[RMDB]
RNA sequence: GGGAACGACUCGAGUAGAGUCGAAAAAAUACGGGCGAUCUUGUCCUGGUAGCACGGCCCGAUACCACGGCCGGUGGUGCCGAUCUUCUUGCUGCCCAUAUAGCGCUCGGUGACCUUGUCGAUAGCAGCCCCCAUUUAAUUUCGAUUAAAUGGGGGCAAAAGAAACAACAACAACAAC
Reactivity to DMS in 0.01 (KOAc 150mM, MgCl2 10mM, bicine 150mM(pH8.5), 24C), signal-to-noise 2, nucleotides 027 to 126: a070a080u030a040c020g020g000g010c020g000a050u070c070u010u010g000u040c100c060u030g000g000u000a040g010c040a110c100g000g000c210c070c040g010a150u010a060c090c050a080c110g000g040c060c050g020g050u000g000g010u010g020c010c010g010a070u010c020u020u020c080u020u010g000c040u000g000c020c030c080a060u010a060u050a160g000c010g020c000u000c020g000g000u000g000a070c030c050u000u000g000u020c030g010a160u030a050g010c160a140
Reactivity to 2A3 in 0.01 (KOAc 150mM, MgCl2 10mM, bicine 150mM(pH8.5), 24C), signal-to-noise 3, nucleotides 027 to 126: a000a000u200a040c030g010g000g000c010g090a160u040c040u040u080g030u050c020c030u040g010g010u010a010g050c030a000c030g010g010c010c040c000g020a090u080a090c010c030a030c080g050g030c080c120g010g020u020g000g030u000g010c010c020g070a160u070c040u130u000c010u050u090g040c000u060g040c010c020c020a060u170a020u100a150g040c010g010c030u040c000g040g020u030g020a040c000c030u050u030g050u030c050g020a060u090a080g070c020a000

Annotation: The record gives the reactivity of an RNA of 177 nucleotides to DMS and 2A3. In probing experiments dimethyl sulfate is read out at A N1 and C N3, which are open when not base-paired. The reactions ran in a buffer of 150 mM KOAc, 10 mM MgCl2 and 150 mM bicine (pH 8.5), at 24 C. 2A3 adducts were read by reverse transcription with SuperScript II with manganese. Values cover nucleotides 27 to 126.